[RMDB]
RNA sequence: GGGAACGACUCGAGUAGAGUCGAAAACACGCGACCCACGGGGCCAUGGUGGCGACCAAUUUCUUCGGGAUCAACACCAUACCGAUCGCGGUCAACGAGGCCGACUACGUGCGGAUGUGGCUUCAGGGCACCCGGUGCACUUCGGUGCACCGGGUGCAAAAGAAACAACAACAACAAC
Reactivity to 2A3 in 0.01 (KOAc 150mM, MgCl2 10mM, bicine 150mM(pH8.5), 24C), signal-to-noise 1, nucleotides 027 to 126: c130a010c000g110c000g000a080c010c010c000a040c050g000g000g000g000c120c030a000u000g060g000u000g070g000c000g020a000c000c000a140a150u180u000u100c230u160u090c160g230g000g000a300u000c000a000a000c000a000c010c010a000u000a040c000c000g000a020u090c000g000c000g120g000u040c020a000a040c000g060a000g000g060c000c000g050a000c050u270a080c100g060u060g040c080g080g000a160u190g020u050g000g000c000u000u000c050a110g000g000